Source information: Structure probing data (2A3 and DMS) for a 207-nucleotide construct. For 2A3, 2,102 sequencing reads were counted. It was measured as part of the RMDB library OK3TST. The reactions ran in a buffer of 150 mM KOAc, 10 mM MgCl2 and 150 mM bicine (pH 8.5), at 24 C. For 2A3 the reverse transcriptase was SuperScript II with manganese.
RNA sequence: GGGAACGACUCGAGUAGAGUCGAAAACAUAAUAUAUACAGGCUAUUUACAAGAUGCGCCGUUAUACCGUUCGAUGAUAUAGUACGUACUAUGCCAAAUGAAUCACGUGUUAAACAAUGGGUGAUGGAUACACUCAAUGGUAUAAUGAUGAAUGAACGUAGGGGAAUCAAUUCGUUGAUUCCCCUACAAAAGAAACAACAACAACAAC
Reactivity to 2A3 in 0.01 (KOAc 150mM, MgCl2 10mM, bicine 150mM(pH8.5), 24C), signal-to-noise 4, nucleotides 027 to 156: c000a020u180a200a020u180a100u070a020u080a070c030a030g050g000c050u040a060u080u190u070a080c080a050a080g070a110u100g090c040g000c030c000g000u000u000a020u020a020c010c020g000u020u070c130g080a040u040g030a020u050a000u010a120g070u050a060c080g030u040a050c040u010a040u070g060c010c040a080a070a130u130g060a040a010u080c030a020c090g080u100g040u090u130a160a250a050c060a110a080u050g070g000g000u000g010a020u040g040g010a050u090a090c010a020c030u040c000a020a070u030g010g010u030a030u000a040a010u020g120a020u080g100a100a100u040g010a060a000c110
Reactivity to DMS in 0.01 (KOAc 150mM, MgCl2 10mM, bicine 150mM(pH8.5), 24C), signal-to-noise 2, nucleotides 027 to 156: c040a060u010a070a090u000a110u000a090u000a170c040a060g050g000c020u000a070u000u000u000a120c110a080a130g000a090u000g010c080g000c020c020g010u010u000a010u000a020c030c020g000u000u000c030g010a280u010g000a080u000a040u000a030g020u000a160c230g010u000a050c040u000a010u010g010c040c030a040a090a170u000g000a110a040u000c050a000c030g070u020g010u010u000a080a060a050c070a120a160u000g000g010g020u010g020a100u000g000g010a200u010a110c020a040c020u000c030a020a040u000g040g030u000a030u000a030a030u000g000a090u000g000a120a090u010g000a090a060c230